[RMDB]
RNA sequence: GGGAACGACUCGAGUAGAGUCGAAAAGCAGAAGUUAGAACAGUUGAGUUAGAGAAUAGGGUAGCUGAGAAUGAGUUUAGUUGAGCUGAGGACAAAUUUGUUAAUUCCUACCCAAAAGAAGUUUAUUGGUAUACAUAAGAUUCGUCUUAUGUAUACCAAAAGAAACAACAACAACAAC
Reactivity to DMS in 0.01 (KOAc 150mM, MgCl2 10mM, bicine 150mM(pH8.5), 24C), signal-to-noise 6, nucleotides 027 to 126: g010c060a060g020a070a060g010u010u010a060g010a090a070c100a050g000u000u000g010a090g010u010u000a050g000a110g010a090a070u010a120g010g000g010u000a040g010c120u000g000a060g010a040a040u010g000a050g010u000u010u000a080g020u000u000g000a090g010c060u000g010a070g000g010a030c050a020a050a080u010u000u000g000u000u000a050a110u000u000c110c000u000a090c030c030c020a050a040a070a090g020a070a100g000u010u000u000a080u020u000
Reactivity to 2A3 in 0.01 (KOAc 150mM, MgCl2 10mM, bicine 150mM(pH8.5), 24C), signal-to-noise 4, nucleotides 027 to 126: g070c040a010g040a190a000g100u100u200a040g050a100a020c020a040g010u060u080g080a040g030u050u080a040g020a000g020a130a130u090a120g010g000g000u030a020g010c140u070g070a010g040a070a050u080g020a010g090u010u040u110a040g020u020u050g030a040g050c050u030g030a030g020g040a010c010a010a070a060u040u040u040g020u000u020a060a060u100u010c000c000u010a010c000c000c000a010a110a010a010g060a080a010g000u040u030u030a080u070u050